[RMDB]
RNA sequence: GGGAACGACUCGAGUAGAGUCGAAAACGGGCGUAUAAGUUGAGAUACUUGGAGCGCGCUGUUCGCUGCGCCUAGGUGUUAUCCCUAGGGUGUUAGGCAGUGGAACUGUGACAGCCGUAAGGGAUGAGCGCCUUUCUAGGUUCGCUUGGAAAGGCGCAAAAGAAACAACAACAACAAC
Reactivity to 2A3 in 0.01 (KOAc 150mM, MgCl2 10mM, bicine 150mM(pH8.5), 24C), signal-to-noise 3, nucleotides 027 to 126: c010g000g080g000c010g010u130a160u030a230a080g020u020u010g080a030g000a070u130a090c000u020u040g000g040a050g000c020g000c000g000c000u020g000u010u020c020g000c000u020g000c020g050c000c010u000a000g000g000u020g030u040u090a030u050c000c000c000u000a000g020g000g010u050g030u020u040a060g030g000c000a000g000u010g070g040a010a030c000u010g000u010g030a020c000a010g020c000c010g040u070a040a050g010g000g000a020u030g030a010
Reactivity to DMS in 0.01 (KOAc 150mM, MgCl2 10mM, bicine 150mM(pH8.5), 24C), signal-to-noise 1, nucleotides 027 to 126: c040g000g000g000c180g000u000a300u060a040a160g000u000u000g000a300g000a300u030a190c010u000u000g000g000a090g000c010g020c010g050c040u000g010u030u010c040g020c010u000g000c000g030c000c000u010a010g010g000u030g010u050u060a090u030c190c010c010u010a030g010g010g010u010g010u030u020a110g010g000c010a010g000u010g010g040a040a110c020u010g010u020g000a080c010a060g010c000c010g000u010a070a050g000g010g000a020u020g000a160